[RMDB]
RNA sequence: GGGAACGACUCGAGUAGAGUCGAAAAGCCGGGUGCAUGCCCACGCCGAGGCUAUCGCCGGUGCACUGGGCGAUGCGUUGGUGCACGACAAGUACUUCGACACGGUGUUGGCCCGGGUGCCCGGUCGCUAAAAUGGUAUGUUCGCAUACCAUUUUAGAAAAGAAACAACAACAACAAC
Reactivity to 2A3 in 0.01 (KOAc 150mM, MgCl2 10mM, bicine 150mM(pH8.5), 24C), signal-to-noise 9, nucleotides 027 to 126: g020c010c000g000g000g010u040g040c090a090u140g030c000c010c000a010c030g040c010c010g040a180g040g000c030u060a070u110c060g000c020c010g060g010u060g010c020a020c050u090g040g100g020c090g060a160u210g030c050g050u070u090g030g000u010g000c010a010c030g080a040c050a130a050g070u130a140c050u090u120c060g080a050c040a020c120g000g000u020g010u040u050g040g000c000c000c010g050g010g000u020g000c000c010c000g000g000u080c030g000
Reactivity to DMS in 0.01 (KOAc 150mM, MgCl2 10mM, bicine 150mM(pH8.5), 24C), signal-to-noise 9, nucleotides 027 to 126: g010c010c000g010g000g010u020g010c050a050u030g010c020c010c030a140c130g010c010c010g010a110g010g020c020u010a040u010c040g020c010c000g010g020u010g010c030a030c020u000g000g000g000c010g020a070u050g010c020g010u020u010g010g010u010g000c000a020c010g010a130c190a120a120g010u020a080c130u020u040c100g010a160c140a300c050g000g000u010g000u010u010g000g000c010c000c030g010g000g020u000g000c010c000c000g000g010u010c150g000